The data come from the RNA Mapping Database (RMDB), library OK1LIB. An RNA of 177 nucleotides, treated with 2A3 and read out base by base. 2A3 adducts were read by reverse transcription with SuperScript II with manganese.

[RMDB]
RNA sequence: GGGAACGACUCGAGUAGAGUCGAAAACAUAAGCGGCACGGUACUCCUGGUCGGCGUGCGUGCUCCUUCAUAUCCCGAGAGCCGUGUCGAGGACCGCAAAAGCGUCGGGAAUAGGCCGGAAAAAGUCGGACUACGCUGGGUUCGCCCAGCGUAGUCCAAAAGAAACAACAACAACAAC
Reactivity to 2A3 in 0.01 (KOAc 150mM, MgCl2 10mM, bicine 150mM(pH8.5), 24C), signal-to-noise 1, nucleotides 027 to 126: c090a010u090a080a010g110c040g000g000c030a000c020g130g000u090a060c000u100c000c050u100g030g230u300c020g000g010c040g000u000g000c000g020u090g050c090u060c010c000u180u140c110a100u020a100u170c010c000c010g070a080g000a050g140c000c030g030u040g010u080c020g000a110g000g100a020c000c000g020c000a040a040a110a090g130c100g010u010c000g010g000g000a000a000u050a070g050g000c020c000g040g000a050a030a000a000a000g100u200c050